[RMDB]
RNA sequence: GGGAACGACUCGAGUAGAGUCGAAAACAAAUAAAGGGUACCUUAUCGAUAUGCAAGGGAACUUUGGGAAUCCUCUAACAGGAGACCCUCAUGCAGCAGCGAGAUAUAUCGAAGCACGUCUUAGCCCUGCUACGAUACUUUUCGAAGUAUCGUAGCAAAAAGAAACAACAACAACAAC
Reactivity to 2A3 in 0.01 (KOAc 150mM, MgCl2 10mM, bicine 150mM(pH8.5), 24C), signal-to-noise 2, nucleotides 027 to 126: c010a030a070a040u300a110a100a050g030g010g010u070a050c000c010u080u100a120u100c040g050a050u020a020u150g040c030a030a050g020g030g050a060a070c030u070u070u030g020g020g000a000a010u000c020c000u020c090u080a120a060c060a070g000g020a010g000a000c000c020c000u020c010a050u150g010c060a080g000c010a000g000c030g060a010g070a060u070a010u010a000u160c020g010a020a010g000c060a030c090g080u020c060u030u080a030g000c000c010c010
Reactivity to DMS in 0.01 (KOAc 150mM, MgCl2 10mM, bicine 150mM(pH8.5), 24C), signal-to-noise 3, nucleotides 027 to 126: c080a060a130a060u000a040a060a030g000g030g020u000a110c080c040u040u020a130u000c020g000a020u000a030u000g000c080a080a140g050g000g000a110a130c100u000u010u000g000g000g000a030a250u000c020c000u000c160u020a080a100c210a030g000g000a020g000a290c010c000c000u000c110a020u010g030c070a060g040c080a060g000c030g010a100g010a130u000a070u010a020u000c020g000a040a050g010c080a050c100g010u010c050u000u010a160g010c010c020c060
The data come from the RNA Mapping Database (RMDB), library OK2TST. This 177-nucleotide RNA was probed chemically with 2A3 and DMS. For DMS the reverse transcriptase was MarathonRT. For 2A3, 1,959 sequencing reads were counted. For 2A3 the reverse transcriptase was SuperScript II with manganese.